[RMDB]
RNA sequence: GGGAACGACUCGAGUAGAGUCGAAAAGAUAUGGAUGACCAAGAUGAGGCUGAUGACCUAGGGUUUCUAGCUUUAUCGGAAACGAUAAAGCUGAAACCCUAGCAAGGCUUGAGGUCAUCCUAAGUCAGAUCAUCUACCUGUUCGCAGGUAGAUGAUCAAAAGAAACAACAACAACAAC
Reactivity to DMS in 0.01 (KOAc 150mM, MgCl2 10mM, bicine 150mM(pH8.5), 24C), signal-to-noise 2, nucleotides 027 to 126: g030a010u040a300u010g000g010a000u000g000a020c020c000a050a300g030a300u010g020a150g020g000c000u000g010a080u010g010a120c300c000u010a020g010g000g000u000u000u000c020u020a050g040c010u010u000u010a000u000c010g040g020a050a010a080c010g020a000u000a000a000a020g000c000u000g000a000a000a010c000c000c000u000a010g000c020a090a160g010g010c010u000u000g020a140g010g010u000c000a020u010c010c010u000a020a060g010u000c020a190
This 177-nucleotide RNA was probed chemically with DMS. DMS adducts were read by reverse transcription with MarathonRT.